[RMDB]
RNA sequence: GGGAACGACUCGAGUAGAGUCGAAAAAAGAUAUGGACGACUGGACGAGCUUGGAUUUAUGGUGGAAGUUACAUCGGAAACGAUGUAAUGAAGCCAUUGUCAGCUCGGUACAGUCGUCCUAAGUCAAGCUAGUAGAGGUGUUCGCACCUCUACUAGCAAAAGAAACAACAACAACAAC
Reactivity to 2A3 in 0.01 (KOAc 150mM, MgCl2 10mM, bicine 150mM(pH8.5), 24C), signal-to-noise 1, nucleotides 027 to 126: a010a030g090a040u110a030u200g010g000a000c010g020a000c000u000g000g000a000c010g000a010g060c050u200u290g140g020a120u300u300u090a000u070g020g030u000g000g010a050a060g010u010u000a000c010a000u000c010g020g000a030a060a040c000g000a000u000g010u010a000a000u300g000a000a010g000c000c000a000u010u000g000u030c010a010g000c000u010c010g000g000u030a030c030a000g000u010c000g000u000c000c000u000a000a010g000u000c020a010a070
Reactivity to DMS in 0.01 (KOAc 150mM, MgCl2 10mM, bicine 150mM(pH8.5), 24C), signal-to-noise 1, nucleotides 027 to 126: a130a030g000a030u000a300u020g000g020a010c010g000a000c000u000g000g000a230c020g030a020g000c000u010u000g040g020a030u000u020u000a000u000g000g000u000g010g000a220a190g010u000u000a000c000a000u010c000g010g000a160a020a160c010g020a030u000g000u000a010a000u010g000a300a300g000c010c010a000u000u020g000u000c000a030g000c000u010c000g020g000u000a060c000a030g000u000c000g000u010c000c000u000a000a080g010u000c060a120a130